[RMDB]
RNA sequence: GGGAACGACUCGAGUAGAGUCGAAAAUGGACUCAGCCUGCCCACCUCCCCUCAGCCGAGCCUAGAGCAGAGAGGCCUGGCUUCCUCCCCCACAGGGCAGGUGGUUGAGACAGGAACCUGGCCCCGGUAGUAACGGAUCUUUCGAGAUCCGUUACUAAAAAGAAACAACAACAACAAC
Reactivity to DMS in 0.01 (KOAc 150mM, MgCl2 10mM, bicine 150mM(pH8.5), 24C), signal-to-noise 4, nucleotides 027 to 126: u010g000g000a110c020u000c030a120g010c000c000u010g030c030c000c000a300c180c030u010c040c000c010c030u020c130a050g010c030c030g000a170g010c010c000u000a060g010a110g010c150a110g020a120g000a060g020g020c000c020u000g020g020c020u000u020c030c020u010c010c000c010c010c010a110c160a120g030g000g000c020a010g020g010u000g000g050u030u000g000a060g020a180c050a040g010g010a080a090c030c010u020g000g000c030c010c010c040g000g010
Reactivity to 2A3 in 0.01 (KOAc 150mM, MgCl2 10mM, bicine 150mM(pH8.5), 24C), signal-to-noise 3, nucleotides 027 to 126: u070g000g030a070c010u000c050a010g020c000c010u000g000c020c000c000a020c000c000u020c010c010c000c010u070c030a000g000c020c000g030a010g000c000c020u130a130g000a110g180c190a030g060a030g030a020g090g020c000c010u040g000g000c000u030u050c000c030u020c000c000c010c000c000a080c030a050g020g010g000c000a000g010g000u010g000g010u060u090g000a020g020a040c010a010g030g020a040a040c000c010u010g030g000c010c000c000c000g060g030